[RMDB]
RNA sequence: GGGAACGACUCGAGUAGAGUCGAAAAAUUUACGACUCUCAAGCGAAGCGAGUGCUAGCAUGCUCGAUAGCACUAAACAAAACAGGAAACUGAAAAUCGAGCAAUCGCUAGAGUGGUUCCCAUACAAGUUGCAUCAAUCAUUCGUGAUUGAUGCAACAAAAGAAACAACAACAACAAC
Reactivity to 2A3 in 0.01 (KOAc 150mM, MgCl2 10mM, bicine 150mM(pH8.5), 24C), signal-to-noise 1, nucleotides 027 to 126: a000u120u130u110a010c010g000a000c000u030c010u030c010a020a020g030c020g050a060a000g020c070g110a070g110u070g030c020u040a000g010c000a030u010g020c000u030c040g010a010u020a030g060c060a010c160u110a040a020a040c060a040a050a010a010c000a010g040g030a090a050a070c020u060g110a040a050a030a030u010c020g000a010g000c000a000a060u010c040g000c020u000a010g010a000g000u030g060g010u000u000c000c000c000a010u020a000c010a020a040
Source information
An RNA of 177 nucleotides, treated with 2A3 and read out base by base. 2A3 adducts were read by reverse transcription with SuperScript II with manganese. For 2A3, 1,322 sequencing reads were counted.